This 207-nucleotide RNA was probed chemically with 2A3 and DMS. DMS adducts were read by reverse transcription with MarathonRT. The DMS profile rests on 3,443 reads. The 2A3 profile rests on 1,341 reads.
RNA sequence: GGGAACGACUCGAGUAGAGUCGAAAAAAAUGCUAAAAUGGGAGGAUUUAAAUUGUCAAAGCUAUUAUGUUGGACUUGUGUGAUUAAUCUUUGAAGGGAAUGGCAAACAGCUUUUUAAUGAGUUUUAAAUGCAGGACUAAGAUUGAUGGAUGGUCCAGAGCCUUAUGUAAUUCGUUACAUAAGGCUCAAAAGAAACAACAACAACAAC
Reactivity to 2A3 in 0.01 (KOAc 150mM, MgCl2 10mM, bicine 150mM(pH8.5), 24C), signal-to-noise 2, nucleotides 027 to 156: a000a000a000u090g000c000u050a010a000a030a040u040g010g010g010a020g020g020a010u080u200u240a080a120a100u100u080g050u130c070a090a040a000g000c040u040a060u180u010a050u240g050u020u060g050g000a050c040u060u020g030u010g000u000g070a040u030u060a040a020u070c020u110u060u140g050a030a020g000g000g040a050a080u040g010g000c000a020a070a000c010a040g010c020u030u080u030u060u050a090a110u100g020a020g080u000u040u030u120a060a120a000u110g010c010a010g020g000a020c020u010a080a000g010a100u040u110g030a010u070g050g050a030u040g000g010u000c000c020a000
Reactivity to DMS in 0.01 (KOAc 150mM, MgCl2 10mM, bicine 150mM(pH8.5), 24C), signal-to-noise 2, nucleotides 027 to 156: a020a040a040u000g010c010u010a040a050a050a070u010g010g000g000a060g030g000a100u010u010u010a030a080a110u010u010g050u010c030a070a080a130g010c070u000a040u010u000a080u000g040u000u000g010g010a030c050u000u010g020u010g020u010g010a110u000u000a020a050u030c030u000u010u020g010a050a050g020g010g010a080a100u010g030g010c000a040a030a040c080a090g000c010u020u000u000u010u000a030a130u000g010a080g020u000u000u000u010a030a070a130u000g040c050a110g030g010a070c030u010a120a080g010a170u000u000g010a070u000g010g010a110u000g010g010u000c010c010a300